[RMDB]
RNA sequence: GGGAACGACUCGAGUAGAGUCGAAAAGAUAUGGAUGUACGUGCUAGAAUAAGCAUCGGAAACGAUGCGAUGUUCUUGGACCACGACAUCCUAAGUCAAAACGUCUCGGCGUUCGCGCCGAGACGAAGAUGAAUUCGAUGUUCGCAUCGAAUUCAUCAAAAGAAACAACAACAACAAC
Reactivity to DMS in 0.01 (KOAc 150mM, MgCl2 10mM, bicine 150mM(pH8.5), 24C), signal-to-noise 2, nucleotides 027 to 126: g000a000u000a080u000g010g000a000u010g000u000a110c000g010u000g010c100u020a000g020a000a000u000a190a300g000c000a000u000c000g030g000a030a010a050c000g000a000u010g000c020g010a050u010g040u000u000c000u000u000g040g000a050c300c000a000c000g010a020c010a010u000c000c010u000a000a090g000u000c000a080a050a110a300c020g000u000c010u000c000g000g000c000g030u000u000c210g030c000g010c020c010g010a000g040a000c000g000a010a030
Reactivity to 2A3 in 0.01 (KOAc 150mM, MgCl2 10mM, bicine 150mM(pH8.5), 24C), signal-to-noise 2, nucleotides 027 to 126: g030a000u030a010u080g000g020a010u010g000u060a240c010g000u020g000c000u020a050g000a030a000u050a060a040g010c010a010u000c010g000g020a020a020a000c010g010a020u020g010c020g020a070u300g030u020u000c000u060u300g020g000a000c020c000a010c000g000a000c000a000u000c000c000u010a030a000g020u020c020a030a070a120a120c040g040u010c000u020c000g000g000c050g010u120u170c300g000c030g000c160c000g000a000g010a000c010g000a000a010